RNA sequence: GGGAACGACUCGAGUAGAGUCGAAAAGACGGUCAUGGUAGAGACCGAGUAAGCGCACAUAGAAAGCCGUCAGAACAGAAAGACGUGUGCAACUGCGCUGAACGAAGUGCAGAGACUGACGAGAAGACACUCAUAGGCCGUUCGCGGCCUAUGAGUGAAAAGAAACAACAACAACAAC
Reactivity to 2A3 in 0.01 (KOAc 150mM, MgCl2 10mM, bicine 150mM(pH8.5), 24C), signal-to-noise 2, nucleotides 027 to 126: g050a070c000g040g010u070c000a020u060g230g000u140a090g030a000g000a110c000c020g000a000g040u050a150a000g020c010g080c070a000c000a050u150a040g300a050a090a000g170c000c030g000u040c000a080g060a270a130c170a000g270a120a060a000g000a000c050g000u000g000u000g120c020a000a080c040u000g010c000g000c000u000g000a110a000c230g080a210a030g000u000g110c010a020g030a000g050a180c000u000g000a000c020g030a000g000a150a000g020a050
Reactivity to DMS in 0.01 (KOAc 150mM, MgCl2 10mM, bicine 150mM(pH8.5), 24C), signal-to-noise 1, nucleotides 027 to 126: g000a040c060g000g000u000c040a010u000g020g080u020a100g000a100g080a130c000c000g000a160g000u080a080a160g020c160g020c000a000c000a160u010a040g000a130a100a150g010c010c120g000u000c000a000g030a170a200c250a080g000a190a040a250g000a020c060g000u030g000u020g030c000a160a050c000u000g000c000g010c000u000g000a070a070c220g000a040a030g100u000g000c000a020g000a000g000a000c040u000g060a000c000g120a170g000a140a130g000a120
Overview:
An RNA of 177 nucleotides, treated with 2A3 and DMS and read out base by base. Conditions: 150 mM KOAc, 10 mM MgCl2 and 150 mM bicine (pH 8.5), 24 C. High 2A3 reactivity points to a flexible backbone, as in loops and unpaired stretches. For 2A3, 624 sequencing reads were counted. The data come from the RNA Mapping Database (RMDB), library OK1LIB. Reactivities are given for positions 27 through 126.